[RMDB]
RNA sequence: GGGAACGACUCGAGUAGAGUCGAAAAUUCAAUCCGACUUACCGCCAUGUCGUACUCGGUGAUGUAGGCGGGAAUUUCCAGCUGAUCCUUGGUGAUGGCCGAGUACAGGUGCUCCACACCCGGAAGCCGCUCCCUGAGUGUUCGCACUCAGGGAGCGAAAAGAAACAACAACAACAAC
Reactivity to 2A3 in 0.01 (KOAc 150mM, MgCl2 10mM, bicine 150mM(pH8.5), 24C), signal-to-noise 2, nucleotides 027 to 126: u150u130c110a000a050u050c000c040g090a040c020u010u040a020c000c020g000c070c000a060u150g080u090c020g010u000a000c000u000c000g030g060u100g000a180u140g020u130a190g120g010c000g040g030g060a000a060u110u060u070c060c020a010g000c000u040g130a170u100c000c090u190u210g160g010u140g140a220u050g080g040c000c020g000a000g000u000a000c000a000g000g000u040g060c020u010c000c000a130c020a000c020c000c100g000g000a000a020g020c010